The data come from the RNA Mapping Database (RMDB), library OK2TRN.
Chemical mapping of a 177-nucleotide RNA with DMS.
Reactivities are rounded to 0.1 and cut off at 0 and 3.
For DMS the reverse transcriptase was MarathonRT.
High DMS reactivity at an A or C suggests that its Watson-Crick edge is free.
The RNA was probed in 150 mM KOAc, 10 mM MgCl2 and 150 mM bicine (pH 8.5) at 24 C.

RNA sequence: GGGAACGACUCGAGUAGAGUCGAAAAGCUGCCUCUGACGUCCUUAAGGGUGGUAAAGCGGGUCUCCCCCGGAAACGGGGACGCGCCUGGCGCUCGCACGGGUAUGCGUGGAGGUCGACCCUGGCCGCAGGCACCCAGGGUUCGCCCUGGGUGCCUGAAAAGAAACAACAACAACAAC
Reactivity to DMS in 0.01 (KOAc 150mM, MgCl2 10mM, bicine 150mM(pH8.5), 24C), signal-to-noise 1, nucleotides 027 to 126: g000c010u000g000c000c000u010c010u000g000a050c020g010u000c010c010u000u010a180a300g010g000g030u010g000g010u000a050a190a140g050c020g020g000g030u000c060u000c100c030c040c060c020g000g020a020a080a090c140g020g000g000g020a030c060g010c040g010c010c000u010g000g000c030g010c010u020c040g000c050a140c300g000g000g020u020a080u000g010c050g000u000g000g030a050g000g010u000c100g010a050c010c000c010u000g010g020c090c090g000